[RMDB]
RNA sequence: GGGAACGACUCGAGUAGAGUCGAAAAUGAAAAUGUGCGUCCCUCCCGAAGCUGCGCGCUCGGUCGAAGAGGACGACCACACCCGAUAGAGGACUGCCGGUCUUCGGUCAAGGGAAAAAGAAAAAAAGUGUAUCUACUAGUUCGCUAGUAGAUACACAAAAGAAACAACAACAACAAC
Reactivity to 2A3 in 0.01 (KOAc 150mM, MgCl2 10mM, bicine 150mM(pH8.5), 24C), signal-to-noise 3, nucleotides 027 to 126: u150g030a020a040a020a130u150g010u040g030c010g010u000c030c000c000u000c020c010c000g020a110a040g000c020u060g030c040g000c010g000c170u000c000g020g020u020c050g030a090a030g060a150g040g000a030c020g030a030c050c020a020c010a000c010c000c000g010a010u080a070g050a010g010g010a020c010u070g130c140c080g050g000u030c010u030u010c010g030g020u060c050a080a120g020g010g000a040a090a010a050a040g090a040a040a010a010a030a010a010
Reactivity to DMS in 0.01 (KOAc 150mM, MgCl2 10mM, bicine 150mM(pH8.5), 24C), signal-to-noise 4, nucleotides 027 to 126: u010g000a110a090a090a110u000g010u000g020c060g000u000c000c000c000u010c050c000c000g000a060a030g040c020u010g030c190g020c100g010c010u000c010g010g020u010c140g010a060a040g000a120g010g000a100c060g010a050c040c040a090c070a060c020c020c000g000a090u000a110g000a040g000g000a040c010u010g010c160c100g000g010u000c010u000u000c000g000g010u000c120a090a100g010g000g000a050a070a040a070a080g020a020a000a050a060a060a060a140
This 177-nucleotide RNA was probed chemically with 2A3 and DMS. The reactions ran in a buffer of 150 mM KOAc, 10 mM MgCl2 and 150 mM bicine (pH 8.5), at 24 C. For 2A3, 4,910 sequencing reads were counted. It was measured as part of the RMDB library M2PK90.